Conditions: 150 mM KOAc, 10 mM MgCl2 and 150 mM bicine (pH 8.5), 24 C. Chemical mapping of a 207-nucleotide RNA with DMS and 2A3. Values cover nucleotides 27 to 156.
RNA sequence: GGGAACGACUCGAGUAGAGUCGAAAACUUUCAGAAUUGUCCUUGGCAGAUUUAUGGCUCACUUUCACAACAAUUAUGGCUUUGACCUUGGCUCAGCUGUUGGGUGUGACCCAGAUGUCGCUUGGGCCAACUUUGGUUUUGCUCUUUCAUCUAAGAAUACUUAGCUUAUGUUCGCAUAAGCUAAGUAAAAAGAAACAACAACAACAAC
Reactivity to DMS in 0.01 (KOAc 150mM, MgCl2 10mM, bicine 150mM(pH8.5), 24C), signal-to-noise 3, nucleotides 027 to 156: c030u010u000u010c050a150g010a070a100u000u000g020u010c040c020u000u000g020g010c010a100g010a130u010u000u010a080u010g010g000c010u000c040a060c040u010u000u020c060a100c040a060a060c040a070a090u000u000a080u000g020g010c040u000u000u000g010a050c060c030u000u000g030g030c000u010c030a080g010c030u010g010u000u000g010g030g050u010g020u000g000a100c030c000c020a120g010a120u010g010u000c150g040c070u010u000g000g020g030c010c000a010a030c070u000u000u000g010g000u000u000u000u000g000c020u000c090u000u000u000c050a120u000c110u000a100a130g010a130a260
Reactivity to 2A3 in 0.01 (KOAc 150mM, MgCl2 10mM, bicine 150mM(pH8.5), 24C), signal-to-noise 4, nucleotides 027 to 156: c020u090u120u100c080a080g070a120a230u090u050g020u030c020c000u020u020g050g000c020a060g030a150u010u050u120a060u090g030g000c000u040c020a020c000u080u190u230c060a090c030a130a040c020a050a060u120u060a100u250g050g000c010u080u030u130g030a040c000c000u000u040g020g000c000u000c030a020g000c000u040g030u110u020g000g020g010u140g070u100g120a080c000c000c000a030g040a130u160g110u210c070g000c030u060u160g000g000g000c010c000a000a020c010u040u060u020g010g010u010u010u050u080g000c010u010c000u030u080u040c060a120u050c070u170a130a020g050a090a050

2A3 adducts were read by reverse transcription with SuperScript II with manganese.